Structure probing data (2A3 and DMS) for a 177-nucleotide construct. The DMS profile rests on 3,179 reads. The RNA was probed in 150 mM KOAc, 10 mM MgCl2 and 150 mM bicine (pH 8.5) at 24 C. For 2A3 the reverse transcriptase was SuperScript II with manganese. Source: RMDB library RFMREP, as collected in RNAgym. For 2A3, 1,208 sequencing reads were counted.
[RMDB]
RNA sequence: GGGAACGACUCGAGUAGAGUCGAAAAUUUUAAUGAGGAGUGAUGUAGUUACAAACUCUCCAGAGCCAUAAUUAGAGCAAACUAAUUGAAGUUGUGUUUUGACACACUUUCCAAAUUCACGGGUGCCGUAACUACUAGAGUUCGCUCUAGUAGUUACAAAAGAAACAACAACAACAAC
Reactivity to 2A3 in 0.01 (KOAc 150mM, MgCl2 10mM, bicine 150mM(pH8.5), 24C), signal-to-noise 2, nucleotides 027 to 126: u050u060u030u100a050a030u060g020a020g060g010a010g010u090g060a130u100g040u120a130g120u180u160a010c010a030a090a040c010u020c010u000c050c020a020g020a000g160c000c030a080u030a210a010u120u060a030g010a010g080c060a090a020a060c000u050a040a020u040u070g030a030a030g050u250u110g020u010g040u040u090u110u300g100a000c000a000c000a000c000u030u020u000c010c010a080a090a150u080u090c050a030c060g070g000g040u030g060c030c040
Reactivity to DMS in 0.01 (KOAc 150mM, MgCl2 10mM, bicine 150mM(pH8.5), 24C), signal-to-noise 4, nucleotides 027 to 126: u000u010u010u000a070a200u000g020a090g010g010a060g020u010g010a230u000g010u000a100g020u010u020a110c040a070a210a080c030u000c010u010c010c020a080g010a130g010c070c040a050u000a040a030u000u010a020g000a140g010c160a070a110a130c030u000a030a020u000u010g000a010a060g000u000u000g010u000g010u000u010u010u000g010a030c010a010c020a010c040u000u010u000c040c060a020a070a100u000u000c110a070c140g000g010g020u000g000c100c110